[RMDB]
This 207-nucleotide RNA was probed chemically with 2A3 and DMS. For DMS, 1,741 sequencing reads were counted. The RNA was probed in 150 mM KOAc, 10 mM MgCl2 and 150 mM bicine (pH 8.5) at 24 C. Values cover nucleotides 27 to 156.

RNA sequence: GGGAACGACUCGAGUAGAGUCGAAAAUGCUAGCAGAGAAGUCAUUAGACAGGCUACGGAAGGUCGUGACAGAGGUUGAAAUGCCUGCUAUUCCAGUACCUAGAGCAAUAGUGGAGGUGGAAAGUCCUAAACCGACCAGCAAGGGAAUUAGUGGAAAGAUUUACCGGAGUUUCGACUCCGGUAAAUCAAAAGAAACAACAACAACAAC
Reactivity to 2A3 in 0.01 (KOAc 150mM, MgCl2 10mM, bicine 150mM(pH8.5), 24C), signal-to-noise 2, nucleotides 027 to 156: u080g000c010u000a010g050c040a020g000a010g010a170a000g020u070c030a060u050u110a040g030a070c050a020g060g000c020u070a020c040g020g030a020a010g030g020u040c040g040u060g010a000c010a040g070a010g040g040u110u100g040a030a060a060u100g020c000c000u010g010c010u030a080u080u000c030c000a010g050u040a070c010c000u030a020g010a010g070c040a060a090u050a080g050u070g060g040a010g000g030u050g000g020a080a010a010g050u030c010c010u020a040a060a070c040c010g040a060c010c010a010g000c050a060a010g010g000g030a010a090u120u030a190g030u030g070g030a040a110a080
Reactivity to DMS in 0.01 (KOAc 150mM, MgCl2 10mM, bicine 150mM(pH8.5), 24C), signal-to-noise 1, nucleotides 027 to 156: u000g000c060u000a020g060c060a070g000a090g010a120a050g010u000c030a120u000u000a220g010a090c070a070g010g060c020u010a210c030g000g000a130a060g000g010u000c000g040u000g010a180c010a110g010a060g010g020u000u010g020a020a090a140u020g010c030c000u000g070c060u000a100u010u010c040c070a180g040u000a060c020c030u000a170g000a190g000c030a100a110u000a060g050u010g010g020a100g000g060u000g020g010a110a090a080g020u000c060c030u000a010a080a120c070c050g000a090c060c030a090g030c030a060a120g030g030g020a030a090u000u000a040g030u000g010g000a150a050a140